Annotation: Conditions: 150 mM KOAc, 10 mM MgCl2 and 150 mM bicine (pH 8.5), 24 C. This 177-nucleotide RNA was probed chemically with 2A3 and DMS. The DMS profile rests on 538 reads.

[RMDB]
RNA sequence: GGGAACGACUCGAGUAGAGUCGAAAAAAAACGAGCGUAAUCGCGUCUUGACUAGACUGUUAGUGACGUGAGUAGGGAUCUAUCCCAGUGUGCAUAGCGCACAAUUCGCUGAUUAACAGUCACGGAAGAUUGGUGUGACCUUCGGGUCACACCAAUCAAAAGAAACAACAACAACAAC
Reactivity to 2A3 in 0.01 (KOAc 150mM, MgCl2 10mM, bicine 150mM(pH8.5), 24C), signal-to-noise 1, nucleotides 027 to 126: a000a000a000a000c070g000a030g020c030g000u000a080a150u120c050g000c000g110u020c000u050u080g040a080c010u020a090g020a030c020u050g040u000u000a110g060u020g020a040c070g000u000g000a010g020u070a140g060g010g000a040u040c060u180a150u120c050c000c000a010g060u010g000u000g000c090a110u130a170g070c070g000c040a000c000a010a020u050u010c000g040c020u020g010a020u020u020a010a010c000a000g000u010c030a010c020g070g030a100a080
Reactivity to DMS in 0.01 (KOAc 150mM, MgCl2 10mM, bicine 150mM(pH8.5), 24C), signal-to-noise 1, nucleotides 027 to 126: a150a010a050a070c060g020a050g020c010g000u000a120a070u000c030g010c040g000u050c000u030u010g030a150c070u020a170g000a010c000u000g000u000u000a050g010u000g000a240c300g000u000g000a010g040u010a190g040g010g000a040u000c210u020a150u000c000c050c000a250g020u020g020u010g000c010a200u010a230g020c120g010c000a000c010a060a000u000u000c000g000c000u020g000a130u010u000a030a000c000a010g000u000c000a030c190g000g010a090a030